[RMDB]
RNA sequence: GGGAACGACUCGAGUAGAGUCGAAAACUUGCAAACUUCGGUUUGCAAGAAAGAACGCUGCGGCGAGGAGCAGCCAGAGAAGGCAACACAAUCGCCAUAAAAAAAUCUAUGAGUUCGCUCAUAGAAACAUUGACUAUUGGUUCGCCAAUAGUCAAUGAAAAGAAACAACAACAACAAC
Reactivity to 2A3 in 0.01 (KOAc 150mM, MgCl2 10mM, bicine 150mM(pH8.5), 24C), signal-to-noise 2, nucleotides 027 to 126: c000u000u000g000c010a000a000a010c000u040u050c060g090g000u000u000u000g000c000a010a010g000a010a000a000g020a060a020c040g010c030u060g040c080g010g000c010g020a010g020g010a010g010c020a010g010c030c010a030g090a020g070a300a070g040g000c010a040a020c010a020c000a150a050u010c000g000c000c010a010u070a000a100a000a010a000a000a010u040c010u020a020u000g010a000g020u030u090c190g020c050u000c000a010u010a000g000a020a000a000
Reactivity to DMS in 0.01 (KOAc 150mM, MgCl2 10mM, bicine 150mM(pH8.5), 24C), signal-to-noise 3, nucleotides 027 to 126: c000u000u000g000c010a010a020a000c000u000u010c160g040g000u000u000u000g000c010a000a000g020a070a120a110g000a130a080c170g010c010u000g070c080g020g020c000g030a010g000g010a070g000c010a170g020c030c000a110g000a130g020a140a080g000g030c010a040a080c090a060c060a150a170u000c050g010c020c000a160u030a010a000a010a050a040a070a060u000c000u000a010u000g000a020g020u000u010c240g020c010u000c000a000u000a000g000a040a070a150
Source information
This 177-nucleotide RNA was probed chemically with 2A3 and DMS. It was measured as part of the RMDB library M2PK50. For 2A3 the reverse transcriptase was SuperScript II with manganese. The RNA was probed in 150 mM KOAc, 10 mM MgCl2 and 150 mM bicine (pH 8.5) at 24 C.